Source information: An RNA of 207 nucleotides, treated with 2A3 and read out base by base. For 2A3 the reverse transcriptase was SuperScript II with manganese. It was measured as part of the RMDB library OK3TST. Values cover nucleotides 27 to 156. The RNA was probed in 150 mM KOAc, 10 mM MgCl2 and 150 mM bicine (pH 8.5) at 24 C. For 2A3, 604 sequencing reads were counted.

RNA sequence: GGGAACGACUCGAGUAGAGUCGAAAAAGGGAUCCUGCUCUCUGGAGGGGGUAGAGAUCAAAGGCGGCUCCUUCCGACUUCUCCAAGAGGGCCAGGCACUGGAGUACGUGUGUCCUUCUGGCUUCUACCCGUACCCUGUGCAGACACGUACCUGCAGGGGAAUAGAGGUAUUCGUACCUCUAUUCCCAAAAGAAACAACAACAACAAC
Reactivity to 2A3 in 0.01 (KOAc 150mM, MgCl2 10mM, bicine 150mM(pH8.5), 24C), signal-to-noise 1, nucleotides 027 to 156: a020g030g000g000a040u010c010c000u040g040c010u010c010u020c030u080g040g020a020g020g070g000g010g040u080a040g020a010g030a020u130c160a140a070a010g120g010c100g070g000c040u070c030c030u140u020c040c000g080a080c020u160u040c010u070c030c020a080a040g030a030g020g000g000c030c020a090g010g000c060a010c100u050g000g020a070g020u040a040c050g030u030g040u040g040u060c040c000u040u160c140u160g060g030c040u110u020c010u130a030c000c000c000g020u020a020c010c000c020u010g020u040g040c000a010g010a030c020a000c030g040u060a070c030c010u030g040c030a060g060